[RMDB]
RNA sequence: GGGAACGACUCGAGUAGAGUCGAAAAGUAAAGAUCGCUCUUUUACUCGGCAUGAUACCACCGUUAUCGGGUCAACAGAGUAGUUGCAAAUGACAACAAUGCUGAGGGUUAUGCUCUCGCUGCCUAAAAAAUCGUUUAACGUUCGCGUUAAACGAAACUGAGGGGACAUGUUCGCAUGUCCCCUCAGAAAAGAAACAACAACAACAAC
Reactivity to 2A3 in 0.01 (KOAc 150mM, MgCl2 10mM, bicine 150mM(pH8.5), 24C), signal-to-noise 1, nucleotides 027 to 156: g010u040a010a010a000g060a060u190c100g040c150u080c000u020u020u000u010a010c030u000c000g000g000c080a020u180g040a010u020a060c010c030a010c010c000g040u080u000a000u170c080g040g000g000u010c000a000a080c060a050g090a020g020u090a010g030u020u010g010c010a040a240a210u140g080a160c020a020a000c020a040a000u100g090c040u100g000a080g020g000g000u130u210a040u220g000c010u010c020u010c060g040c050u070g030c000c020u050a080a010a010a020a040a120u020c000g010u010u010u000a020a010c030g000u060u000c260g000c000g060u000u000a000a000a000c000g000a020a000a010